[RMDB]
An RNA of 207 nucleotides, treated with 2A3 and DMS and read out base by base.
The data come from the RNA Mapping Database (RMDB), library RNAMAK.
RNA sequence: GGGAACGACUCGAGUAGAGUCGAAAAACGUGAUUCGUCACGUGCUGCAACCUUUGUGUUUGCUGCUCCACUACCCACCGCUAUAUGAACCCAUUGGGUUCACAUAGCGAGGUGGAGCCGAGCAAACACUCUGGUGAACUAGAAGCUUCGGCUUCAAACUACAUCAUAUCUUCGGAUAUGAUGUAGUAAAAGAAACAACAACAACAAC
Reactivity to 2A3 in 0.01 (KOAc 150mM, MgCl2 10mM, bicine 150mM(pH8.5), 24C), signal-to-noise 9, nucleotides 027 to 156: a000c010g000u010g000a030u060u100c200g040u020c160a010c010g020u040g100c090u120g040c030a070a030c000c000u000u010u010g000u000g000u000u000u000g010c010u010g010c000u010c000c000a010c010u090a110c030c090c060a050c040c000g000c010u000a000u000a010u020g010a010a000c010c010c090a290u130u300g010g000g000u000u000c000a000c000a000u000a000g000c000g000a000g000g000u000g000g000a000g000c010c060g280a000g000c000a000a000a000c000a000c000u000c000u000g000g000u040g030a060a060c070u090a160g000a010a000g010c000u080u160c300g090g000c000u010u020c050a080a030
Reactivity to DMS in 0.01 (KOAc 150mM, MgCl2 10mM, bicine 150mM(pH8.5), 24C), signal-to-noise 3, nucleotides 027 to 156: a090c010g040u000g010a060u000u010c280g020u000c010a020c020g010u010g040c020u010g020c030a140a030c010c000u000u000u000g020u000g040u000u010u000g020c010u010g000c000u000c000c000a010c010u000a040c010c010c020a300c200c000g000c010u000a020u000a000u000g000a010a020c000c000c020a300u010u010g050g020g000u000u000c010a000c010a010u000a000g010c000g010a010g000g010u000g010g010a010g010c010c040g000a050g000c000a020a010a020c020a010c000u000c000u000g010g000u000g010a080a160c120u010a160g000a030a030g010c010u000u000c250g050g010c010u000u010c000a020a190

Annotation
The reactions ran in a buffer of 150 mM KOAc, 10 mM MgCl2 and 150 mM bicine (pH 8.5), at 24 C. Values cover nucleotides 27 to 156.